This 207-nucleotide RNA was probed chemically with DMS and 2A3. For DMS the reverse transcriptase was MarathonRT.
RNA sequence: GGGAACGACUCGAGUAGAGUCGAAAAAGUGCUUAGUUAGUCAUACUUACUUUUUAAGGGAUAUUAAGAUUUAUCGCAUUGGAUGGAAUAAUCUGACUCUUUAGCUGGCACUCCACGUGGAUUGCCAUCAUGGAGACUCAAUGGAUGUUCUCAUGAGUAUCCCACCGUUAUUCGUAACGGUGGGAUAAAAAGAAACAACAACAACAAC
Reactivity to DMS in 0.01 (KOAc 150mM, MgCl2 10mM, bicine 150mM(pH8.5), 24C), signal-to-noise 2, nucleotides 027 to 156: a080g010u000g020c030u010u000a060g030u000u000a090g000u000c060a140u000a160c060u010u000a050c030u010u000u010u010u000a030a050g000g010g010a090u030a060u010u010a080a150g010a100u000u000u000a030u000c030g000c100a200u000u000g030g000a300u000g020g010a040a080u000a020a050u010c030u020g000a040c040u000c040u010u000u010a100g050c090u020g020g020c000a060c070u000c010c010a120c210g010u000g020g000a060u000u000g020c100c000a040u000c050a030u000g000g000a040g020a060c030u000c030a040a130u000g010g000a080u010g020u000u010c010u000c020a100u000g000a100g010
Reactivity to 2A3 in 0.01 (KOAc 150mM, MgCl2 10mM, bicine 150mM(pH8.5), 24C), signal-to-noise 2, nucleotides 027 to 156: a000g040u050g030c050u080u090a010g090u050u090a040g020u040c020a060u030a180c030u170u030a030c030u060u230u040u030u150a080a040g030g020g000a030u030a140u180u030a130a060g010a070u020u060u020a130u150c080g000c080a060u070u100g070g030a050u050g010g060a030a030u050a050a050u060c050u030g010a020c000u020c000u000u050u040a080g020c050u050g010g000c000a000c000u000c010c000a140c140g090u250g000g000a030u070u000g000c000c000a010u010c000a010u050g020g020a010g000a040c020u030c050a000a070u090g010g020a030u000g020u030u000c030u000c050a030u040g090a000g070
Overview
High 2A3 reactivity points to a flexible backbone, as in loops and unpaired stretches. For 2A3, 814 sequencing reads were counted.